[RMDB]
RNA sequence: GGGAACGACUCGAGUAGAGUCGAAAACUCCUGGAGGGGUCUCCGCCUCUACCCAGGACUCUUUCAUGACCAGGAGGCUGAGGCCCCUCACAGGCGGCAAACGUCGCUACUCUUCGGAGUAGCGACGGACAAUUACAAUGUUCGCAUUGUAAUUGUCAAAAGAAACAACAACAACAAC
Reactivity to DMS in 0.01 (KOAc 150mM, MgCl2 10mM, bicine 150mM(pH8.5), 24C), signal-to-noise 2, nucleotides 027 to 126: c040u000c010c020u000g000g000a010g020g030g020g060u000c010u000c010c210g010c010c010u000c010u010a160c300c100c180a210g000g000a080c210u010c070u020u010u010c180a110u010g000a030c050c020a240g000g000a020g020g030c020u010g010a040g020g010c030c000c000c000u000c000a010c000a010g010g030c120g020g000c160a050a070a300c010g000u000c000g010c000u010a000c000u000c000u000u020c190g010g000a020g010u000a010g030c010g020a010c020g000
Reactivity to 2A3 in 0.01 (KOAc 150mM, MgCl2 10mM, bicine 150mM(pH8.5), 24C), signal-to-noise 1, nucleotides 027 to 126: c000u000c010c000u000g000g000a010g000g010g000g000u020c000u000c040c020g020c000c020u050c000u050a120c040c050c050a030g010g040a170c010u050c020u100u300u170c160a140u240g040a040c000c000a050g030g000a010g000g030c010u010g000a030g010g000c080c090c000c020u000c000a010c000a000g000g000c000g040g010c070a120a060a010c030g000u020c000g000c000u020a020c000u000c040u020u060c130g070g000a000g000u000a000g060c050g000a000c000g000